[RMDB]
RNA sequence: GGGAACGACUCGAGUAGAGUCGAAAAUCCUAAGUCCGUACGCAUUCCGUUUGACGAUACUUGUCAGUGUUAUCGGAAACGAUAACACUUGGAUUUAGUAUCCGAGGAAUGCGGUACGGAUAUGGAAAACUGAGGGUUUGUUCGCAAACCCUCAGAACGGACUGCAUUAGUUCGCUAAUGCAGUCCGAAAAGAAACAACAACAACAAC
Reactivity to 2A3 in 0.01 (KOAc 150mM, MgCl2 10mM, bicine 150mM(pH8.5), 24C), signal-to-noise 1, nucleotides 027 to 156: u050c010c000u020a060a030g110u000c000c000g020u000a000c000g010c000a000u000u000c000c050g110u190u150u280g080a090c030g020a020u000a000c050u020u000g020u000c000a000g000u000g000u010u000a000u020c000g030g150a200a030a000c010g000a000u000a000a000c000a000c010u000u030g030g000a010u170u000u020a000g000u000a000u020c000c000g010a030g000g000a010a000u010g000c000g000g010u000a000c000g000g000a000u000a000u010g000g040a020a120a000a080c000u000g000a000g000g030g000u010u030u040g130u030u090c250g000c110a000a000a000c000c000c000u010c000a000g000a000a000

The record gives the reactivity of an RNA of 207 nucleotides to 2A3.
2A3 adducts were read by reverse transcription with SuperScript II with manganese.